[RMDB]
RNA sequence: GGGAACGACUCGAGUAGAGUCGAAAAAUAAAAUGGCAGUUAAAGGUUAUAAUUUUGACAGACAAAUCAUAUCACCAAAAAUGGACGCUAUUGUCAACGGUCACAGCGCCGCGAAAGCCCAAGGAAUGAUUGCACCCGCAACAUUAUCUAUCAGCGGACCCCAUGUUAUAUUCGUAUAACAUGGGGUAAAAGAAACAACAACAACAAC
Reactivity to 2A3 in 0.01 (KOAc 150mM, MgCl2 10mM, bicine 150mM(pH8.5), 24C), signal-to-noise 2, nucleotides 027 to 156: a010u080a000a000a000a020u050g000g000c010a020g070u080u110a080a100a100g010g010u040u060a070u040a170a190u020u150u100u100g030a060c020a030g060a040c030a040a030a010u050c000a040u040a060u130c050a050c080c050a040a050a020a080a120u110g060g000a000c010g030c060u060a030u040u060g040u080c040a040a050c020g010g020u020c010a010c000a110g030c070g010c050c010g040c040g010a050a120a000g000c000c030c010a020a020g060g020a040a060u060g070a250u030u050g000c050a080c020c040c050g000c040a040a010c010a020u070u110a060u140c070u040a060u040c060a010g020c000g000g040
Reactivity to DMS in 0.01 (KOAc 150mM, MgCl2 10mM, bicine 150mM(pH8.5), 24C), signal-to-noise 2, nucleotides 027 to 156: a110u010a000a040a040a120u000g040g000c010a100g030u000u010a070a070a030g000g010u000u000a110u010a060a080u000u000u010u000g020a080c020a130g010a120c020a060a060a160u000c050a060u000a130u010c040a080c030c040a030a080a060a090a120u000g000g010a010c030g010c040u000a060u010u000g030u010c020a050a030c020g010g040u000c010a020c100a100g020c130g000c030c010g000c020g000a090a080a110g000c020c010c010a040a100g020g000a100a110u000g000a100u020u000g010c010a110c100c030c050g000c040a070a070c040a080u000u000a050u000c090u000a110u000c080a110g010c070g010g010